[RMDB]
RNA sequence: GGGAACGACUCGAGUAGAGUCGAAAAGAUAUGGAUCCUCCUACCCACCAGUUGCUCCCGUUGAAAAGUUGUUACUCGGAAACGAGUAACAACUUGGAGGGAACAACUGAGGGAGGAUCCUAAGUCACUAUGGUUUACUGUUCGCAGUAAACCAUAGAAAAGAAACAACAACAACAAC
Reactivity to 2A3 in 0.01 (KOAc 150mM, MgCl2 10mM, bicine 150mM(pH8.5), 24C), signal-to-noise 1, nucleotides 027 to 126: g140a090u290a200u300g000g000a000u000c010c010u000c000c020u200a300c060c000c040a030c000c000a010g000u010u010g000c010u010c000c000c030g070u200u130g150a080a060a020a020g010u010u000g000u000u020a000c010u010c000g020g030a100a060a070c000g030a000g010u020a010a000c000a000a000c000u010u000g000g020a010g010g030g000a010a010c000a000a010c010u000g020a020g000g000g000a000g000g010a000u010c000c000u000a010a000g040u010c050a010
Reactivity to DMS in 0.01 (KOAc 150mM, MgCl2 10mM, bicine 150mM(pH8.5), 24C), signal-to-noise 5, nucleotides 027 to 126: g010a130u020a210u020g020g010a000u000c000c000u000c000c000u010a150c040c030c020a300c120c000a000g010u000u000g000c020u000c010c000c000g000u000u010g030a210a050a020a020g010u000u000g000u000u000a000c000u000c000g010g000a090a100a200c010g010a020g010u000a000a000c000a000a000c000u000u000g000g020a100g010g010g010a010a010c010a010a010c010u000g000a040g020g000g000a010g000g010a000u000c000c000u010a010a070g020u010c130a190